[RMDB]
The data come from the RNA Mapping Database (RMDB), library M2RFPK. This 207-nucleotide RNA was probed chemically with 2A3 and DMS. The 2A3 profile rests on 2,005 reads. The RNA was probed in 150 mM KOAc, 10 mM MgCl2 and 150 mM bicine (pH 8.5) at 24 C.
RNA sequence: GGGAACGACUCGAGUAGAGUCGAAAAGAACACGUCUCGGGACGACGCUAAACUGGCCCUGGUCGGGAUGGGUUUAACGACCCCUCGGGUUUCCUAGUUCCUAAAACUAGGUGGUGGAGUCAUAUAAAAAACUUCUACACGUUCGCGUGUAGAAGAAGACUAUUAGAAGGUUCGCCUUCUAAUAGUCAAAAGAAACAACAACAACAAC
Reactivity to 2A3 in 0.01 (KOAc 150mM, MgCl2 10mM, bicine 150mM(pH8.5), 24C), signal-to-noise 3, nucleotides 027 to 156: g030a030a010c030a000c040g030u010c020u060c060g040g000g060a080c070g010a040c040g020c120u100a120a140a170c140u120g070g000c010c000c030u060g060g050u050c040g050g020g000a070u070g020g010g000u020u030u050a110a020c050g020a010c010c000c020c010u030c010g010g000g000u010u040u000c000c000u010a010g010u000u020c020c030u060a030a040a020a030c030u040a040g000g000u010g010g010u040g010g040a070g020u090c040a040u130a010u280a180a130a010a000a020a060c010u000u000c010u000a010c000a000c000g010u040u030c130g010c000g150u000g000u000a000g000a000a000g000a000a000
Reactivity to DMS in 0.01 (KOAc 150mM, MgCl2 10mM, bicine 150mM(pH8.5), 24C), signal-to-noise 1, nucleotides 027 to 156: g000a050a130c050a070c000g000u020c000u000c050g000g000g000a150c030g020a120c030g010c030u010a050a090a140c050u000g020g040c000c040c010u000g020g020u000c020g030g010g000a010u010g030g010g060u000u000u000a120a200c060g010a100c010c010c000c030u000c020g000g000g020u000u000u000c070c000u000a050g000u000u000c020c070u010a080a050a030a050c040u010a030g010g020u020g010g000u000g020g000a220g000u000c020a100u010a110u020a000a030a050a030a030a080c040u010u000c000u010a060c000a020c010g030u000u000c300g050c040g060u000g010u000a050g000a020a010g000a040a090